[RMDB]
RNA sequence: GGGAACGACUCGAGUAGAGUCGAAAAGCGACUGUCGAUCAAGUUGGCCGCCUCGGCAUCUGUACGCGCGACGAUGAUGCCGGGCACCCGCAUAAUGUCGAGCUGGAAGCGGGCGGCGUUGAGGCGACCCGUAUUUAGGUUUCGACCUAAAUACGGGAAAAGAAACAACAACAACAAC
Reactivity to 2A3 in 0.01 (KOAc 150mM, MgCl2 10mM, bicine 150mM(pH8.5), 24C), signal-to-noise 6, nucleotides 027 to 126: g040c030g070a060c100u060g020u090c030g020a070u070c060a060a030g070u090u070g150g030c020c020g010c010c020u040c060g070g000c010a000u000c010u070g130u170a060c100g040c020g030c090g110a060c020g010a050u170g010a010u010g040c090c000g000g000g020c040a050c010c010c000g000c020a090u160a190a060u150g050u080c030g010a030g020c030u050g010g030a070a020g030c020g020g000g000c020g020g000c030g010u030u080g030a030g060g020c020g020a040
Reactivity to DMS in 0.01 (KOAc 150mM, MgCl2 10mM, bicine 150mM(pH8.5), 24C), signal-to-noise 9, nucleotides 027 to 126: g010c050g000a090c050u000g010u000c030g010a140u000c070a070a100g010u000u010g020g030c030c060g000c030c010u010c040g020g020c000a020u000c010u000g020u010a070c130g000c070g010c060g010a090c040g010a110u010g000a020u000g010c040c030g000g000g000c100a050c090c010c030g010c070a060u010a080a070u000g010u000c020g000a080g020c030u010g000g010a100a080g020c030g010g000g010c040g010g010c030g010u000u000g010a080g000g010c040g000a160